[RMDB]
RNA sequence: GGGAACGACUCGAGUAGAGUCGAAAACGCUUCAUCAGGAGUUAUGCCGCUUUACUUUGGUGACUUGAAACAAGCGGUAACAUUGUUUGACCGUCAACAAAUGUCAUUGCUAUCUACCAAUAUUGGUGGUGGUGCGUUUGAAACUGACACUACUAAAAUCAUUUAACGCAUUCGUGCGUUAAAUGAUAAAAGAAACAACAACAACAAC
Reactivity to 2A3 in 0.01 (KOAc 150mM, MgCl2 10mM, bicine 150mM(pH8.5), 24C), signal-to-noise 5, nucleotides 027 to 156: c070g020c100u050u040c020a070u010c030a050g040g000a020g030u060u060a100u150g010c000c000g000c030u010u020u070a040c010u040u090u040g040g010u040g040a040c060u170u220g100a130a100a030c040a050a020g010c000g000g000u010a030a010c020a070u060u130g070u070u000u130g080a110c110c050g030u020c010a090a140c010a020a300a020u060g100u220c020a020u010u060g000c000u020a030u080c020u050a100c100c050a270a160u150a180u300u200g000g000u020g000g000u030g000g010u040g010c000g000u020u000u010g080a120a070a010c030u020g010a010c020a030c070u180a030c030u060a090a080a020
Reactivity to DMS in 0.01 (KOAc 150mM, MgCl2 10mM, bicine 150mM(pH8.5), 24C), signal-to-noise 2, nucleotides 027 to 156: c050g010c000u000u000c010a100u000c010a060g010g000a070g000u010u020a020u010g010c000c040g020c080u020u010u000a070c040u000u000u000g020g040u000g000a070c150u010u020g020a190a140a140c140a040a030g000c050g020g080u000a010a130c090a110u000u000g020u020u010u000g010a130c110c100g000u010c010a080a300c020a050a050a030u000g020u010c000a010u000u000g000c040u000a040u000c030u020a300c120c040a080a160u000a220u000u000g030g030u000g010g050u000g020g020u000g000c090g020u010u000u000g020a050a060a160c050u000g000a080c030a080c070u020a050c070u000a040a050a120